[RMDB]
RNA sequence: GGGAACGACUCGAGUAGAGUCGAAAAACACACACACUAUGGUUCUUCUGAUAGUGGUGUGUGCAACAAACUGAUGUAAUUGUUCAUAAGGAACGGACAUCAGGAGAACUAUGUUAGUGUGUGAGAAGAUAGUUAGCAGAUUCGUCUGUUAGCUAUCAAAAGAAACAACAACAACAAC
Reactivity to DMS in 0.01 (KOAc 150mM, MgCl2 10mM, bicine 150mM(pH8.5), 24C), signal-to-noise 7, nucleotides 027 to 126: a100c080a230c010a000c000a010c000a030c030u010a050u000g000g010u000u010c030u010u000c010u000g000a020u010a120g020u010g010g010u080g010u000g020u010g010c180a030a020c040a050a040a100c070u020g010a150u040g010u000a080a100u010u020g000u000u000c010a060u020a060a070g000g010a160a040c020g000g010a060c120a030u000c000a000g000g000a010g000a020a000c020u000a030u020g050u040u010a020g010u000g010u000g000u000g000a060g000a100a090
Reactivity to 2A3 in 0.01 (KOAc 150mM, MgCl2 10mM, bicine 150mM(pH8.5), 24C), signal-to-noise 9, nucleotides 027 to 126: a010c050a000c000a000c010a000c010a000c020u050a030u080g020g000u010u010c000u020u000c000u020g040a020u050a180g050u050g120g070u040g000u030g000u030g040c010a010a020c010a010a060a040c060u190g090a130u190g120u150a130a140u070u050g000u010u010c010a020u050a150a100g180g020a080a040c020g030g070a020c000a030u000c000a000g000g010a000g000a000a000c020u040a030u170g190u100u090a050g000u000g010u000g000u010g010a050g020a030a010